Structure probing data (DMS) for a 177-nucleotide construct. For DMS the reverse transcriptase was MarathonRT. Source: RMDB library OK2TRN, as collected in RNAgym.

RNA sequence: GGGAACGACUCGAGUAGAGUCGAAAAGCUCAGUUGAUUGUCUCCCUGUACUAGGGCUUGAUGAGUGCCUGGAGUUCGAUUUAUGUACUGUAGCCUCUAAUUUCCUGAAUCUGGAAGAAGCCUUGGAAACUAUGCUUGGUUUCGACCAAGCAUAGUUAAAAGAAACAACAACAACAAC
Reactivity to DMS in 0.01 (KOAc 150mM, MgCl2 10mM, bicine 150mM(pH8.5), 24C), signal-to-noise 3, nucleotides 027 to 126: g010c010u000c030a090g000u010u000g000a100u010u000g010u000c060u000c020c020c030u010g030u000a080c050u000a080g010g010g000c050u000u000g020a110u010g010a050g010u000g000c100c040u000g000g010a050g010u000u000c020g010a180u010u010u000a070u030g020u000a030c030u000g000u000a050g020c020c020u020c030u030a100a140u000u000u000c000c010u000g010a080a110u010c150u010g010g000a050a060g010a050a070g010c050c020u000u000g010g000a190